[RMDB]
RNA sequence: GGGAACGACUCGAGUAGAGUCGAAAAGGGGACCGUCCCUCGGUAAUGGCGAAUGGGACCCAGAACUCUCUCAGAAUCUAGGGAGAUCUCCCAGAUUCGAGAGAAAACUGGCUCUCCCUUAGCCAUCAAAGGCUAUCGUUCGCGAUAGCCAAAAGAAACAACAACAACAAC
Reactivity to DMS in 0.01 (KOAc 150mM, MgCl2 10mM, bicine 150mM(pH8.5), 24C), signal-to-noise 5, nucleotides 027 to 129: g000g050g040g000a070c080c070g020u000c020c010c000u010c000g000g040u030a100a020u030g040g000c020g030a140a060u020g000g020g060a050c090c000c000a010g010a100a280c200u000c020u020c020u020c000a110g060a030a000u040c020u000a200g010g020g010a010g020a120u020c140u020c050c030c010a040g020a030u000u000c000g000a000g020a000g010a010a010a030a160c010u020g020g030c000u020c050u020c020c010c020u030u020a190g010c020c020a030u000c090a010a080a060
Reactivity to 2A3 in 0.01 (KOAc 150mM, MgCl2 10mM, bicine 150mM(pH8.5), 24C), signal-to-noise 5, nucleotides 027 to 129: g020g000g010g020a050c020c060g140u090c030c010c000u020c010g040g020u140a080a020u010g000g000c010g000a040a030u050g000g000g000a030c070c000c000a000g000a030a020c010u010c000u000c000u010c030a070g000a000a000u010c020u130a170g000g050g000a050g050a170u130c130u020c140c000c000a000g000a000u000u000c000g000a000g000a000g000a010a010a000a000c000u000g000g000c010u000c000u000c000c000c000u000u030a000g000c000c000a010u010c010a010a010a010